[RMDB]
The record gives the reactivity of an RNA of 207 nucleotides to DMS and 2A3. The RNA was probed in 150 mM KOAc, 10 mM MgCl2 and 150 mM bicine (pH 8.5) at 24 C. The DMS profile rests on 1,778 reads.

RNA sequence: GGGAACGACUCGAGUAGAGUCGAAAACACUGGAUGCGGGGAACUCUCGUUAGGCGUUUGGUACCACCCAGCAGGAUAACACCCUGCUGGUUCCAAUGAUACGGGCAUCAGGUAAAAAUUCAAACGAUAGAGCCAAUCCGAGCCAGUUGGCUGCCCCCCUUCUUAUAUCGUUCGCGAUAUAAGAAGGAAAAGAAACAACAACAACAAC
Reactivity to DMS in 0.01 (KOAc 150mM, MgCl2 10mM, bicine 150mM(pH8.5), 24C), signal-to-noise 2, nucleotides 027 to 156: c010a070c030u000g000g000a100u010g050c120g080g010g020g000a090a070c040u000c000u070c010g010u010u000a090g060g020c120g010u000u000u010g000g020u000a060c010c000a270c300c010c000a000g020c000a020g000g000a300u010a050a160c070a300c180c000c010u010g010c000u000g000g010u000u000c020c070a020a150u000g010a130u000a080c090g000g020g000c010a070u010c050a120g000g030u000a000a030a050a120a100u000u000c040a090a030a040c020g010a070u000a100g010a070g020c000c020a040a130u000c020c010g000a090g040c000c010a120g020u010u000g000g030c160u000g010c000c030c050c020
Reactivity to 2A3 in 0.01 (KOAc 150mM, MgCl2 10mM, bicine 150mM(pH8.5), 24C), signal-to-noise 3, nucleotides 027 to 156: c010a000c010u010g000g020a030u140g060c010g000g000g020g080a080a090c010u010c010u030c050g080u090u070a150g120g040c030g020u000u060u040g030g020u020a020c000c030a020c000c030c000a000g000c010a000g000g000a020u120a260a060c050a100c060c000c000u000g000c010u000g000g000u020u000c010c010a010a040u120g090a040u100a110c070g030g050g000c060a080u060c060a060g050g000u070a040a050a040a040a110u160u120c050a050a000a000c020g000a030u050a080g010a000g010c030c030a010a030u050c000c020g000a000g050c000c000a010g010u060u070g080g000c070u110g000c000c000c000c000